[RMDB]
RNA sequence: GGGAACGACUCGAGUAGAGUCGAAAAAGCAGCUCGUUCACGCGCGCCUCGACCGACGUCGACGUCGGCUGCCAUUGCAGCACCGGCCCGAGGCUCUCGUCGACGACGGUGCUCACGAGCGCCGCCACGCUGCAUUACCAUUCGUGGUAAUGCAGCGAAAAGAAACAACAACAACAAC
Reactivity to DMS in 0.01 (KOAc 150mM, MgCl2 10mM, bicine 150mM(pH8.5), 24C), signal-to-noise 2, nucleotides 027 to 126: a100g000c020a070g000c040u000c050g010u000u010c070a100c130g030c040g020c110g020c040c020u000c050g010a050c030c010g020a100c000g010u000c040g020a050c050g010u000c090g010g000c050u000g000c020c200a130u000u000g000c040a040g020c010a170c130c020g020g000c030c050c060g010a120g000g000c070u010c080u000c010g020u000c020g000a070c050g010a040c020g010g000u000g000c040u000c100a260c060g000a020g010c040g010c010c010g000c030c070a140
Reactivity to 2A3 in 0.01 (KOAc 150mM, MgCl2 10mM, bicine 150mM(pH8.5), 24C), signal-to-noise 3, nucleotides 027 to 126: a000g060c080a040g010c020u020c080g080u180u120c110a070c130g030c010g010c010g020c020c040u020c030g080a100c040c030g040a040c010g070u040c030g010a050c020g040u100c050g050g000c010u010g000c010c020a300u180u300g000c050a020g000c000a050c110c050g050g000c000c030c060g070a090g020g020c030u010c000u020c020g020u000c010g010a020c010g000a010c030g000g000u040g000c060u060c030a070c010g010a000g000c010g020c010c030g010c020c020a070
An RNA of 177 nucleotides, treated with DMS and 2A3 and read out base by base. Conditions: 150 mM KOAc, 10 mM MgCl2 and 150 mM bicine (pH 8.5), 24 C. For 2A3, 3,939 sequencing reads were counted. DMS adducts were read by reverse transcription with MarathonRT.